The record gives the reactivity of an RNA of 177 nucleotides to 2A3 and DMS. The 2A3 profile rests on 4,574 reads.
RNA sequence: GGGAACGACUCGAGUAGAGUCGAAAAUAACUCCUCCCGCGAGAGCCGCUAAGGUGCAAACGCUAUGCGGUACUGCCUGAUAGGGUGCUUGCGAGUGCCGCGGGAGGUCUCGUAGAAAAUAACCUAAGUCAAUGAUUUAGUUCGCUAAAUCAUUGACAAAAGAAACAACAACAACAAC
Reactivity to 2A3 in 0.01 (KOAc 150mM, MgCl2 10mM, bicine 150mM(pH8.5), 24C), signal-to-noise 2, nucleotides 027 to 126: u080a030a040c020u010c020c000u000c020c010c000g000c000g000a010g000a010g030c000c030g000c030u060a120a110g070g010u050g070c060a190a100a030c050g030c080u010a020u140g020c000g000g000u010a020c000u000g020c020c000u030g020a020u010a020g000g020g020u000g000c010u030u110g040c010g000a000g000u000g000c000c000g000c000g000g000g000a010g000g000u000c000u000c000g000u030a060g170a030a130a010a050u140a040a050c030c040u070a120a030
Reactivity to DMS in 0.01 (KOAc 150mM, MgCl2 10mM, bicine 150mM(pH8.5), 24C), signal-to-noise 3, nucleotides 027 to 126: u020a090a210c120u010c000c000u000c010c010c000g010c010g000a020g000a300g000c000c000g020c010u010a240a110g010g010u000g000c300a090a110a100c050g000c010u000a240u000g000c010g000g020u010a020c030u000g010c010c020u000g010a080u010a160g000g000g000u000g000c010u000u010g010c020g000a000g000u010g000c000c000g020c010g000g000g000a010g000g000u010c000u000c020g000u000a210g010a060a080a100a110u010a080a120c090c030u020a060a140

2A3 adducts were read by reverse transcription with SuperScript II with manganese.
Values cover nucleotides 27 to 126.